[RMDB]
RNA sequence: GGGAACGACUCGAGUAGAGUCGAAAACGGAUCAACUUCGGUUGAUCCGAAAGGGACGGGUCCGGAGGGGGAUACUCGCGGUCCCAAGAAGAAUCCAGACUGAAAGGAAGGUCUUCGGACCUUCCAAUCACGGUAUAUCGUUCGCGAUAUACCGUGAAAAAGAAACAACAACAACAAC
Reactivity to DMS in 0.01 (KOAc 150mM, MgCl2 10mM, bicine 150mM(pH8.5), 24C), signal-to-noise 2, nucleotides 027 to 126: c020g010g010a000u000c000a000a000c000u000u010c180g010g010u010u000g000a030u000c000c010g000a020a050a130g000g000g000a170c130g000g020g000u000c030c030g000g020a080g000g000g000g000g000a120u000a040c020u010c110g000c040g000g010u000c000c000c010a060a080g010a280a120g010a120a060u000c000c020a160g000a220c120u020g000a090a130a190g010g000a050a000g010g000u010c000u000u010c140g030g010a030c000c000u000u000c000c000a020a030
Reactivity to 2A3 in 0.01 (KOAc 150mM, MgCl2 10mM, bicine 150mM(pH8.5), 24C), signal-to-noise 1, nucleotides 027 to 126: c010g010g000a000u000c000a000a000c000u030u050c160g100g020u010u010g000a000u000c000c000g010a020a000a010g000g000g050a020c040g000g000g010u030c020c020g020g020a070g070g080g010g020g060a040u080a260c020u020c040g220c080g070g000u020c000c000c000a000a000g060a030a000g040a010a020u060c000c010a000g120a120c070u160g080a120a080a050g000g000a000a000g000g010u020c000u030u050c140g010g020a000c000c000u000u000c000c000a010a000

The record gives the reactivity of an RNA of 177 nucleotides to DMS and 2A3. The reactions ran in a buffer of 150 mM KOAc, 10 mM MgCl2 and 150 mM bicine (pH 8.5), at 24 C. For 2A3, 2,273 sequencing reads were counted. DMS adducts were read by reverse transcription with MarathonRT. For 2A3 the reverse transcriptase was SuperScript II with manganese. The data come from the RNA Mapping Database (RMDB), library M2PK50. Reactivities are given for positions 27 through 126.